RNA sequence: GGGAACGACUCGAGUAGAGUCGAAAAAGCCGCGACGGCUCGCAUGCGCCUACGCUGAGCGCUGUGCAAGACGAACUGGUGUGGAUCGACUGCGAGAUGACCGGGCUCGAUCUGGGUUCGGACAAGCAAAUCGGUCGGAUUUCGAUCCGACCGAUUUAAAAGAAACAACAACAACAAC
Reactivity to DMS in 0.01 (KOAc 150mM, MgCl2 10mM, bicine 150mM(pH8.5), 24C), signal-to-noise 2, nucleotides 027 to 126: a140g000c010c010g000c070g000a200c120g000g000c010u000c020g010c030a050u000g000c010g000c020c000u000a170c300g000c120u000g000a150g000c020g010c040u000g000u000g020c020a070a100g000a050c020g050a060a200c230u000g000g000u000g000u010g000g030a160u000c040g000a040c140u020g020c000g030a080g000a230u020g000a210c020c010g020g030g030c060u010c010g000a090u030c150u050g010g000g040u000u000c030g000g000a090c070a040a100g010c050
Reactivity to 2A3 in 0.01 (KOAc 150mM, MgCl2 10mM, bicine 150mM(pH8.5), 24C), signal-to-noise 2, nucleotides 027 to 126: a000g010c020c040g020c030g050a080c060g020g030c010u020c070g030c040a020u090g000c020g090c030c010u060a040c130g130c120u090g040a030g000c050g000c070u120g000u070g050c050a100a080g040a060c040g000a060a040c060u060g020g020u120g010u090g080g010a040u010c020g020a020c040u040g010c030g000a000g000a090u120g050a040c000c010g010g050g000c000u000c020g130a300u110c290u300g020g000g000u050u000c030g020g010a150c130a060a000g130c010
An RNA of 177 nucleotides, treated with DMS and 2A3 and read out base by base. For DMS the reverse transcriptase was MarathonRT. For 2A3 the reverse transcriptase was SuperScript II with manganese. The 2A3 profile rests on 756 reads. It was measured as part of the RMDB library OK1LIB. The RNA was probed in 150 mM KOAc, 10 mM MgCl2 and 150 mM bicine (pH 8.5) at 24 C.